Chemical mapping of a 177-nucleotide RNA with DMS and 2A3.
For DMS, 3,575 sequencing reads were counted.
The data come from the RNA Mapping Database (RMDB), library OK1LIB.
For 2A3 the reverse transcriptase was SuperScript II with manganese.
The reactions ran in a buffer of 150 mM KOAc, 10 mM MgCl2 and 150 mM bicine (pH 8.5), at 24 C.
For DMS the reverse transcriptase was MarathonRT.

RNA sequence: GGGAACGACUCGAGUAGAGUCGAAAAGAAAGUAGCGAAUGCAGGUCGGCUUCACGGACCUGCUACGUGAAGCGAAGUCGUACUCCAUGUACGUACGACGAGUACGUGGUAAAGCUACGAAAAGAAAGGGUAUAGGAAACUUCGGUUUCCUAUACCCAAAAGAAACAACAACAACAAC
Reactivity to DMS in 0.01 (KOAc 150mM, MgCl2 10mM, bicine 150mM(pH8.5), 24C), signal-to-noise 3, nucleotides 027 to 126: g000a150a100a050g020u000a010g010c000g000a120a120u050g000c000a020g010g000u010c000g000g020c170u010u010c190a060c050g000g060a010c000c000u030g000c000u020a010c000g060u000g000a120a150g000c030g010a110a220g010u000c020g000u000a000c010u050c060c180a160u090g000u000a070c060g010u040a000c000g000a110c040g030a190g010u000a020c000g000u010g020g010u020a030a100a050g000c000u020a000c000g010a060a120a140a120g020a070a110a070
Reactivity to 2A3 in 0.01 (KOAc 150mM, MgCl2 10mM, bicine 150mM(pH8.5), 24C), signal-to-noise 3, nucleotides 027 to 126: g070a020a050a030g000u000a000g000c030g010a150a000u180g010c010a000g060g000u010c000g040g100c160u160u140c100a060c150g030g010a010c000c020u000g010c000u010a000c020g040u080g010a070a020g000c030g130a030a000g060u020c000g000u000a000c010u050c110c000a090u140g050u070a010c050g010u000a010c040g090a010c030g000a060g040u030a010c010g000u010g000g040u140a130a130a000g030c000u000a000c020g030a040a020a000a090g160a010a070a070